[RMDB]
An RNA of 177 nucleotides, treated with 2A3 and DMS and read out base by base. Conditions: 150 mM KOAc, 10 mM MgCl2 and 150 mM bicine (pH 8.5), 24 C. The DMS profile rests on 1,211 reads. It was measured as part of the RMDB library OK2TST.

RNA sequence: GGGAACGACUCGAGUAGAGUCGAAAACUGCUCAACCCCAACGUCACGUCCGAGGCUGAGUGUGUCAAUACGGGCGACGUGGAAGUGCUGGAUGAGUGCUUGUCUGAAUAUUUCACCUCGGUGCGCAGCGGCCUCUUAAAUUCGUUUAAGAGGCCGCAAAAGAAACAACAACAACAAC
Reactivity to 2A3 in 0.01 (KOAc 150mM, MgCl2 10mM, bicine 150mM(pH8.5), 24C), signal-to-noise 1, nucleotides 027 to 126: c000u030g000c000u020c050a030a040c010c010c000c000a040a110c010g100u020c030a000c070g030u000c000c040g000a040g020g000c120u040g010a030g090u170g030u030g070u090c070a090a080u090a230c000g000g040g020c010g060a020c010g020u060g070g060a090a000g030u010g000c030u060g050g220a240u170g030a060g040u080g000c010u060u050g040u150c020u040g080a110a050u130a120u060u090u010c020a000c030c000u010c030g000g010u070g010c020g120c020a010
Reactivity to DMS in 0.01 (KOAc 150mM, MgCl2 10mM, bicine 150mM(pH8.5), 24C), signal-to-noise 2, nucleotides 027 to 126: c120u010g040c040u000c080a140a160c070c000c000c030a130a120c030g000u000c030a160c100g000u010c020c010g000a070g000g010c150u010g020a070g040u000g020u030g010u000c040a050a140u010a090c060g010g010g030c040g030a060c060g030u010g030g010a050a070g010u010g000c030u000g030g000a110u020g020a040g030u000g010c020u000u010g000u030c090u000g040a070a040u000a070u010u020u000c040a060c030c000u000c030g010g000u000g010c060g020c060a110